[RMDB]
RNA sequence: GGGAACGACUCGAGUAGAGUCGAAAAUAUAGUAUGGAGGAGGCUGGAAGUUAGAAGGAGAAUGGAAGGAAGGAGAAGAAGUCCAGGUAUUGGCACUGGAGCCUGGAAAAAAUCGAAGAGCCGUAAAUAGCGUUAAGUUAUUCGUAACUUAACGCUAAAAAGAAACAACAACAACAAC
Reactivity to DMS in 0.01 (KOAc 150mM, MgCl2 10mM, bicine 150mM(pH8.5), 24C), signal-to-noise 2, nucleotides 027 to 126: u030a060u030a120g010u020a080u010g010g000a060g020g020a040g000g000c080u000g020g020a090a050g010u010u020a060g030a080a060g000g010a070g000a090a110u010g000g020a070a040g010g000a060a100g000g010a080g000a080a060g010a070a090g020u000c020c000a010g000g000u000a140u000u000g010g000c050a060c080u000g000g000a120g000c000c000u010g000g030a000a020a020a060a010a060u010c100g000a060a080g020a060g000c020c040g040u000a040a060a070